[RMDB]
RNA sequence: GGGAACGACUCGAGUAGAGUCGAAAACGCUGGGCCAUAGUGGCAAUGUUAGCUUUUGACGAGGAUACCUGAAGCGCGCACGGGUAAUCUCGAUAAGCUAACAUUGCGUAACAUCUAUGGCCUGUGCUGAAGCGCGCACGGCAACCGAAAGGUGCGAGAAAGAGAGCUUGUUCGCAAGCUCUCUUUCAAAAGAAACAACAACAACAAC
Reactivity to 2A3 in 0.01 (KOAc 150mM, MgCl2 10mM, bicine 150mM(pH8.5), 24C), signal-to-noise 2, nucleotides 027 to 156: c080g000c020u060g000g000g000c010c000a000u000a000g010u020g110g000c000a000a010u000g010u020u000a000g000c000u070u020u120u300g280a200c100g000a010g000g100a010u030a090c010c020u030g040a180a030g030c010g000c010g000c020a030c020g060g030g030u040a130a300u060c020u000c020g100a130u050a280a000g000c000u000a000a000c000a010u000u000g000c000g000u010a030a040c000a120u090c010u000a000u000g000g000c000c000u010g000u020g000c010u040g040a130a050g000c000g010c000g000c010a000c030g090g010c000a120a180c010c000g070a100a040a020g030g030u050g030c120g010a150